RNA sequence: GGGAACGACUCGAGUAGAGUCGAAAACAGAAGGUACCCGCAGGUAACAAGAGACACUGUGGAUCUGAUCUGGGGCCAACUACCUCUAUCAGGUGAGUUAGUUAAAAAACGUCUAGUGGGCCAAACCAUUUGAAAAACUAUUCGUAGUUUUUCAAAUAAAAGAAACAACAACAACAAC
Reactivity to DMS in 0.01 (KOAc 150mM, MgCl2 10mM, bicine 150mM(pH8.5), 24C), signal-to-noise 9, nucleotides 027 to 126: c020a020g010a070a300g010g000u000a080c110c000c000g010c010a000g000g000u050a020a020c000a150a040g000a170g000a200c300a010c000u000g000u000g000g000a030u000c010u000g000a140u030c010u000g000g000g000g010c000c000a030a020c020u000a010c040c000u000c020u010a140u040c210a120g010g030u010g010a020g000u000u000a030g010u000u020a000a040a060a060a060a040c070g010u020c140u030a110g010u010g010g010g020c010c020a070a130a120c060c040
Reactivity to 2A3 in 0.01 (KOAc 150mM, MgCl2 10mM, bicine 150mM(pH8.5), 24C), signal-to-noise 9, nucleotides 027 to 126: c000a000g030a030a010g040g010u040a060c010c000c000g000c000a000g000g020u080a010a010c030a130a230g010a010g000a020c000a000c010u000g000u010g020g020a010u000c010u030g080a250u030c000u010g040g000g040g000c010c000a010a000c000u020a010c010c010u020c010u070a190u270c110a080g130g150u110g060a010g000u010u030a000g000u010u020a040a060a020a010a000a000c020g020u030c050u050a020g040u060g040g000g000c010c000a020a020a030c010c000